[RMDB]
About this RNA
An RNA of 177 nucleotides, treated with DMS and 2A3 and read out base by base. The data come from the RNA Mapping Database (RMDB), library OK2TRN. Conditions: 150 mM KOAc, 10 mM MgCl2 and 150 mM bicine (pH 8.5), 24 C. For DMS, 2,372 sequencing reads were counted. For DMS the reverse transcriptase was MarathonRT.
RNA sequence: GGGAACGACUCGAGUAGAGUCGAAAAAUGUAAAAAUGUGAUGGGCAACUUGUGUCUGAUCUAGUGCUAAUAGACCCAGGAGGCACCCAGGAAAGACUGACUGCCUGCUCAGGCUCUUCCUCUGGAAUACACAUCUGGUAUUCGUACCAGAUGUGUAAAAAGAAACAACAACAACAAC
Reactivity to DMS in 0.01 (KOAc 150mM, MgCl2 10mM, bicine 150mM(pH8.5), 24C), signal-to-noise 3, nucleotides 027 to 126: a060u020g010u000a050a080a060a120a080u000g000u010g010a110u010g000g000g000c020a050a090c200u010u000g020u010g030u000c010u000g010a170u000c030u000a080g010u010g000c040u020a060a170u000a090g000a080c060c020c040a080g000g020a260g000g010c060a020c020c020c070a060g020g000a050a070a070g010a090c050u000g000a060c050u010g000c060c050u000g010c100u000c050a050g000g020c070u010c090u000u000c010c020u000c090u010g000g010a130a140
Reactivity to 2A3 in 0.01 (KOAc 150mM, MgCl2 10mM, bicine 150mM(pH8.5), 24C), signal-to-noise 1, nucleotides 027 to 126: a000u060g000u050a110a030a030a040a030u130g050u020g080a120u090g010g010g000c010a000a020c100u080u100g030u030g000u080c060u040g030a050u000c040u120a050g000u010g030c030u050a070a100u050a220g040a140c000c020c040a010g070g000a070g080g000c010a010c000c050c000a020g000g070a040a040a030g030a020c030u030g030a020c000u050g020c010c000u000g000c020u010c020a000g070g040c010u020c020u060u000c020c020u000c060u090g010g080a090a030